[RMDB]
Source: RMDB library OK2TST, as collected in RNAgym.
Structure probing data (DMS and 2A3) for a 177-nucleotide construct.
The reactions ran in a buffer of 150 mM KOAc, 10 mM MgCl2 and 150 mM bicine (pH 8.5), at 24 C.
The 2A3 profile rests on 3,722 reads.
DMS (dimethyl sulfate) methylates the pairing face of unpaired adenines and cytosines.
RNA sequence: GGGAACGACUCGAGUAGAGUCGAAAACAGAUGAAGUUCUCAAGUGCCACACUAGUCAGAGCUAGCAGGUUUAUAACCAUAUCUAAUGACAACAUGGCCCUCAAGGAGGCAGGUGAGUCAAAAGAUAGAAUGCAAACUAGUUCGCUAGUUUGCAUUCAAAAGAAACAACAACAACAAC
Reactivity to DMS in 0.01 (KOAc 150mM, MgCl2 10mM, bicine 150mM(pH8.5), 24C), signal-to-noise 3, nucleotides 027 to 126: c070a070g000a080u030g010a140a150g000u000u000c030u000c010a130a090g020u000g010c060c050a040c070a140c050u000a050g000u000c080a060g000a100g000c050u000a050g000c090a050g020g010u000u000u010a110u000a070a090c070c040a170u010a020u000c000u020a030a300u000g010a030c010a050a010c030a010u000g000g000c020c000c010u000c220a120a130g010g000a070g010g020c010a020g000g010u000g000a140g010u000c010a020a020a220a030g010a020u000a050
Reactivity to 2A3 in 0.01 (KOAc 150mM, MgCl2 10mM, bicine 150mM(pH8.5), 24C), signal-to-noise 3, nucleotides 027 to 126: c040a010g110a130u110g090a150a020g020u070u020c010u000c020a010a020g090u060g100c050c020a070c010a010c060u050a030g030u100c080a060g000a010g090c010u020a000g050c020a030g020g060u010u100u080a150u060a060a040c030c020a020u000a000u100c000u010a020a060u020g000a000c000a040a000c010a020u040g080g000c000c010c000u060c030a050a110g150g010a070g030g020c010a000g000g050u030g040a040g020u010c000a020a040a000a000g020a010u030a100